[RMDB]
RNA sequence: GGGAACGACUCGAGUAGAGUCGAAAAGUUACAAUUCUUGGCAUUUAGUCGAGGGUGAACUAUUGGUGCAAGACUUACGCUUAAAUAAGCUCCUGCAUUGGUCUGAUCAAACCAUAUGCUACAAGGAUACCUGUGAUGUUCGCAUCACAGAAAAGAAACAACAACAACAAC
Reactivity to 2A3 in 0.01 (KOAc 150mM, MgCl2 10mM, bicine 150mM(pH8.5), 24C), signal-to-noise 9, nucleotides 027 to 129: g020u030u060a090c100a060a060u030u010c010u010u010g040g000c010a100u110u080u220a060g020u030c030g040a080g040g060g010u070g030a030a010c010u030a070u090u120g050g010u050g020c020a040a020g020a050c010u060u060a030c060g030c060u070u130a090a090a050u170a130a010g030c030u020c010c010u010g000c000a020u000u010g010g000u010c060u070g080a180u140c090a050a040a020c010c000a030u030a010u200g020c010u040a060c030a050a040g060g000a040u060a100c010
Reactivity to DMS in 0.01 (KOAc 150mM, MgCl2 10mM, bicine 150mM(pH8.5), 24C), signal-to-noise 9, nucleotides 027 to 129: g000u020u030a070c140a080a050u000u000c000u020u030g000g000c020a120u020u040u030a120g030u020c060g010a070g010g020g020u010g020a040a050c030u030a070u060u050g000g000u030g000c000a060a040g010a060c000u010u000a060c120g000c070u030u040a070a130a110u060a010a000g000c090u020c010c020u000g020c050a020u030u020g000g010u010c070u000g020a090u020c150a110a110a020c030c030a040u060a040u040g050c000u030a020c150a080a020g020g020a050u010a050c130

Structure probing data (2A3 and DMS) for a 170-nucleotide construct. The DMS profile rests on 65,220 reads. The RNA was probed in 150 mM KOAc, 10 mM MgCl2 and 150 mM bicine (pH 8.5) at 24 C. For DMS the reverse transcriptase was MarathonRT.